[RMDB]
RNA sequence: GGGAACGACUCGAGUAGAGUCGAAAAUCACGCGCGGCAUCGCGGAUCACUUGUAGCCGCAUCUUGAUCGCGGCGACCUCCUCGGCCGCCUUUUCCGCGGCCCGCGCGACCGCUUCACACGCGCCGGCAAGACCUAGUUGUUCGCAACUAGGUCUUGAAAAGAAACAACAACAACAAC
Reactivity to DMS in 0.01 (KOAc 150mM, MgCl2 10mM, bicine 150mM(pH8.5), 24C), signal-to-noise 4, nucleotides 027 to 126: u000c090a180c070g010c050g030c040g000g010c100a080u010c050g020c030g000g000a040u010c120a080c120u020u000g010u000a100g010c030c020g000c000a060u000c120u000u010g010a060u000c150g000c030g010g010c000g010a040c050c070u000c040c070u000c080g000g000c000c020g010c020c040u010u000u000u000c030c060g000c000g020g010c300c010c000g000c030g020c010g010a070c060c020g000c060u010u000c150a090c100a070c140g000c030g010c050c070g000g020
Reactivity to 2A3 in 0.01 (KOAc 150mM, MgCl2 10mM, bicine 150mM(pH8.5), 24C), signal-to-noise 2, nucleotides 027 to 126: u080c010a020c050g030c000g000c000g030g040c030a090u080c070g010c000g000g000a030u060c060a050c130u110u160g120u170a010g010c000c020g010c000a040u080c040u140u300g090a140u150c120g020c010g000g000c000g010a020c010c000u060c010c000u050c030g040g000c020c010g000c020c000u130u060u030u010c000c040g010c000g020g060c010c000c000g000c000g000c000g000a010c000c020g010c000u140u150c040a090c010a000c030g030c020g020c040c020g030g040
About this RNA
Chemical mapping of a 177-nucleotide RNA with DMS and 2A3. 2A3 adducts were read by reverse transcription with SuperScript II with manganese. The RNA was probed in 150 mM KOAc, 10 mM MgCl2 and 150 mM bicine (pH 8.5) at 24 C. For DMS, 3,429 sequencing reads were counted.